[RMDB]
RNA sequence: GGGAACGACUCGAGUAGAGUCGAAAAACGGUCGUACGCGACCGAGGCGCGGCUAGGUCGACGGACCUAACAAUGGCAUCCCGCAUUCUGCCAUCCGCCGCGCAGCUUCUUCUCAAACGGUGCGGAAAAAAGUAGGACACCUUCGGGUGUCCUACAAGUCUAAGCGAUACUUCGGUAUCGCUUAGACAAAAGAAACAACAACAACAAC
Reactivity to 2A3 in 0.01 (KOAc 150mM, MgCl2 10mM, bicine 150mM(pH8.5), 24C), signal-to-noise 2, nucleotides 027 to 156: a000c010g020g000u000c010g000u070a010c130g010c000g160a000c010c000g000a090g000g000c000g010c000g000g010c010u010a020g020g000u000c020g100a200c160g160g010a000c000c000u000a040a030c050a070a010u020g010g010c000a020u130c010c020c010g000c000a020u300u120c020u040g000c010c000a010u030c000c050g030c000c000g000c020g020c000a010g000c030u190u080c010u070u000c020u010c020a080a090a020c040g010g010u000g020c000g000g000a050a000a000a100a000a050g010u000a000g000g000a000c000a000c000c030u010u040c220g040g000g000u000g000u000c000c000u000a000c000a000a000